[RMDB]
RNA sequence: GGGAACGACUCGAGUAGAGUCGAAAAUCAUCCUCCUUCUUAGGUCCAGGAAGCAUCUUAGUUCAAGCCACAGGAUAGGGGAGGAGGCAAACAAUAAAAAGUGAAGUGAGACACUGGGUGACUUUUCUUUUUUUUGAGACAGGGUCUCUGUUACCCAAAAUGGUAUUUACUUCGGUAAAUACCAUUUAAAAGAAACAACAACAACAAC
Reactivity to 2A3 in 0.01 (KOAc 150mM, MgCl2 10mM, bicine 150mM(pH8.5), 24C), signal-to-noise 4, nucleotides 027 to 156: u060c010a040u030c000c000u000c000c000u010u020c000u020u070a090g190g020u020c010c000a020g040g060a070a040g030c030a120u140c110u210u220a120g050u220u160c110a100a020g030c020c010a080c080a070g010g000a010u040a030g050g010g000g000a000g000g000a000g000g010c010a090a130a030c040a050a060u130a140a050a030a010a000g050u050g040a060a010g030u050g050a090g040a040c040a040c170u130g070g160g000u030g040a050c010u070u040u140u110c020u120u110u110u050u030u030u120u110g030a030g010a020c070a070g060g070g040u020c020u000c030u080g040u030u100a050c000c000c000a010
Reactivity to DMS in 0.01 (KOAc 150mM, MgCl2 10mM, bicine 150mM(pH8.5), 24C), signal-to-noise 2, nucleotides 027 to 156: u010c040a140u010c010c010u000c000c000u000u010c010u000u000a060g070g030u000c010c000a130g040g000a130a130g050c030a160u000c080u000u010a150g040u020u010c040a060a120g010c010c040a090c070a150g010g010a050u010a200g010g010g020g010a040g030g000a020g010g010c110a040a110a120c050a070a090u010a030a100a050a070a030g000u000g000a050a050g000u000g000a160g010a090c050a140c080u000g020g020g030u000g010a040c050u010u010u000u010c010u000u000u000u000u000u000u000u000g000a120g000a120c100a060g020g000g010u010c010u000c080u010g010u000u000a120c020c000c010a060

Chemical mapping of a 207-nucleotide RNA with 2A3 and DMS. The reactions ran in a buffer of 150 mM KOAc, 10 mM MgCl2 and 150 mM bicine (pH 8.5), at 24 C. The DMS profile rests on 3,974 reads. Values cover nucleotides 27 to 156. The 2A3 profile rests on 2,265 reads. 2A3 adducts were read by reverse transcription with SuperScript II with manganese.